[RMDB]
RNA sequence: GGGAACGACUCGAGUAGAGUCGAAAAGUACGUAGAGUGUCGGCAAGCUCUAUAUAUGGACACUUACGAAGGGUUUUGGUUGUUUUGUAUCUCAAGCCGACUUUGAGUAUUUGAUGAAAAUACGACAUGAAUCCUGUGACGUUCGCGUCACAGGAAAGAUACUUUGUGGAUUCGUCCACAAAGUAUCAAAAGAAACAACAACAACAAC
Reactivity to 2A3 in 0.01 (KOAc 150mM, MgCl2 10mM, bicine 150mM(pH8.5), 24C), signal-to-noise 4, nucleotides 027 to 156: g050u050a030c060g000u010a010g010a030g060u050g020u030c020g020g020c050a110a050g010c030u000c040u050a030u010a030u010a020u120g110g010a050c050a010c140u110u090a070c130g080a090a060g070g020g000u040u050u140u130g070g000u000u030g010u020u040u000u040g040u030a110u050c020u010c090a020a030g000c010c000g020a020c000u060u030u080g050a040g010u010a030u000u030u020g120a170u110g020a000a030a010a010u040a000c030g050a020c030a060u160g060a080a040u010c000c000u010g000u000g000a000c020g000u020u040c230g010c010g100u000c000a000c000a000g000g000a010a000a000
Reactivity to DMS in 0.01 (KOAc 150mM, MgCl2 10mM, bicine 150mM(pH8.5), 24C), signal-to-noise 2, nucleotides 027 to 156: g010u030a050c020g030u010a020g030a050g000u000g000u000c010g030g020c060a100a300g020c010u010c000u010a050u000a040u000a040u010g010g010a100c050a030c050u010u000a160c080g000a100a070g010g000g030u000u000u000u000g000g030u000u000g010u000u000u000u000g000u010a080u000c030u000c030a090a150g030c020c010g010a060c040u000u000u010g010a300g010u010a040u000u000u040g010a170u000g000a140a040a040a040u010a030c020g010a190c070a100u030g000a100a220u000c000c000u000g020u000g020a000c000g000u000u000c300g040c000g040u000c000a000c010a000g010g000a010a000a060
This 207-nucleotide RNA was probed chemically with 2A3 and DMS. The 2A3 profile rests on 2,613 reads.